[RMDB]
RNA sequence: GGGAACGACUCGAGUAGAGUCGAAAAAGUUAGGUUCGCUAUGGUGCAACUCUUUAAGGCAAUAACGAACUAAUUCUAAGCAAGUAAUGGAGAAAUGCCAGGGUCACUAUCCAGCCAUAAUAGUGCUGUAAGUGACUUAGAUUCGUCUAAGUCACAAUACACCUCUAGGAUUCGUCCUAGAGGUGUAAAAAGAAACAACAACAACAAC
Reactivity to 2A3 in 0.01 (KOAc 150mM, MgCl2 10mM, bicine 150mM(pH8.5), 24C), signal-to-noise 5, nucleotides 027 to 156: a000g060u060u070a050g040g100u040u020c020g000c040u050a020u100g090g130u090g070c070a150a250c070u100c090u120u270u240a110a050g050g020c020a060a050u080a080a020c030g020a030a000c010u050a000a030u080u020c070u170a100a020g080c050a030a110g040u120a090a080u110g060g010a050g020a040a100a040u020g010c010c010a040g000g000g060u060c020a000c030u020a040u060c010c020a010g020c000c010a030u060a190a080u080a140g120u070g050c030u020g040u070a120a040g000u010g000a000c000u000u000a000g000a010u020u030c140g000u000c130u010a000a000g000u010c000a000c000a000a010
Reactivity to DMS in 0.01 (KOAc 150mM, MgCl2 10mM, bicine 150mM(pH8.5), 24C), signal-to-noise 3, nucleotides 027 to 156: a110g010u010u000a040g030g000u000u000c030g030c020u000a040u000g000g050u000g000c040a060a170c110u010c090u000u000u010a060a110g020g020c020a120a060u000a050a040c020g000a050a030c020u000a030a080u000u010c040u000a090a150g030c060a090a100g020u000a060a090u000g010g000a060g020a090a100a070u000g020c080c080a110g000g030g010u000c020a030c000u000a070u000c020c000a130g000c040c040a110u000a050a080u010a050g030u000g020c030u000g010u010a040a180g030u000g010a020c000u000u000a010g010a090u000u010c300g000u000c010u000a000a020g000u000c000a020c000a060a210

The record gives the reactivity of an RNA of 207 nucleotides to 2A3 and DMS. The 2A3 profile rests on 2,805 reads. The data come from the RNA Mapping Database (RMDB), library M2RFPK. The DMS profile rests on 5,926 reads.